[RMDB]
RNA sequence: GGGAACGACUCGAGUAGAGUCGAAAAGAAGAGCAGGCCGAUAAUCUUGUGCAGUAUGCAUGCUCGUAACUCCAGCGCACAAGUGGAGGCACAAGAUUUUAAUCCAGCAUAGCGCAGGAGCCGCAGAGCACUAGUCACGGUUCGCCGUGACUAGUGCAAAAGAAACAACAACAACAAC
Reactivity to DMS in 0.01 (KOAc 150mM, MgCl2 10mM, bicine 150mM(pH8.5), 24C), signal-to-noise 1, nucleotides 027 to 126: g000a080a040g010a030g030c000a000g000g000c060c120g030a190u040a000a080u000c000u000u000g000u000g010c000a180g020u030a080u000g020c000a140u000g000c050u000c010g020u010a120a170c000u000c000c000a040g000c000g110c020a020c300a040a150g030u000g000g030a030g000g030c010a000c000a000a000g000a030u000u000u020u070a060a030u000c050c070a090g000c090a060u000a050g000c080g060c000a040g000g000a010g000c100c000g000c270a110g040a220
Reactivity to 2A3 in 0.01 (KOAc 150mM, MgCl2 10mM, bicine 150mM(pH8.5), 24C), signal-to-noise 2, nucleotides 027 to 126: g050a060a010g040a010g050c010a000g000g000c060c090g040a090u070a130a010u030c000u100u050g000u000g000c130a080g040u170a100u210g080c080a050u040g000c010u060c000g020u020a010a010c000u010c000c000a000g020c030g000c000a020c000a300a110g060u040g010g030a000g000g150c000a000c000a010a010g020a020u000u010u000u260a080a060u000c050c010a000g040c050a250u160a210g000c000g000c050a070g010g040a000g000c020c010g000c010a020g000a000